[RMDB]
Structure probing data (DMS and 2A3) for a 207-nucleotide construct. The reactions ran in a buffer of 150 mM KOAc, 10 mM MgCl2 and 150 mM bicine (pH 8.5), at 24 C.
RNA sequence: GGGAACGACUCGAGUAGAGUCGAAAAGUGCCUCGUCGGCCCGUCAUGCCAACCUGAUCCGAAGUUCAAGGUGGUUUCUCUGGCCUUCCAGAGAGAUGCGCGUCGGAAGAACCGACGAACAAACCUUAAAACAAAACGACGUUCGCGUCGUUUUGAACUAUGCGAGAAUGUUCGCAUUCUCGCAUAGAAAAGAAACAACAACAACAAC
Reactivity to DMS in 0.01 (KOAc 150mM, MgCl2 10mM, bicine 150mM(pH8.5), 24C), signal-to-noise 1, nucleotides 027 to 156: g040u000g030c040c050u000c000g060u020c020g010g000c000c020c000g010u000c050a070u000g000c070c050a060a080c020c020u010g020a080u000c060c090g020a140a150g040u010u000c020a030a050g000g000u000g000g020u000u000u000c000u000c020u000g010g000c150c150u000u030c030c000a080g000a030g000a050g030a060u010g020c070g000c050g040u000c030g010g020a100a150g000a050a140c010c010g000a040c010g040a030a070c030a090a030a060c030c000u010u000a060a060a100a160c000a030a020a030a030c000g020a010c010g000u000u010c300g000c070g060u000c000g010u000u000u000u000g040a060a250
Reactivity to 2A3 in 0.01 (KOAc 150mM, MgCl2 10mM, bicine 150mM(pH8.5), 24C), signal-to-noise 3, nucleotides 027 to 156: g060u040g060c030c010u010c000g020u000c010g030g040c000c000c010g030u030c030a070u160g010c000c020a070a070c010c030u010g010a030u070c010c150g220a220a020g070u080u060c050a070a030g040g010u000g010g020u010u060u020c010u000c010u000g040g000c060c100u300u160c030c010a000g000a000g000a010g000a040u090g060c060g000c010g090u040c000g020g020a090a040g010a110a060c010c000g000a000c000g010a040a010c040a020a050a010c010c020u110u280a060a060a030a040c000a000a010a000a000c010g010a000c000g020u020u050c200g010c000g050u000c000g000u010u010u000u000g000a000a000
Notes:
It was measured as part of the RMDB library M2RFPK. DMS adducts were read by reverse transcription with MarathonRT. 2A3 is a SHAPE reagent: it acylates the 2'-hydroxyl of flexible nucleotides of all four kinds. 2A3 adducts were read by reverse transcription with SuperScript II with manganese. For DMS, 2,408 sequencing reads were counted.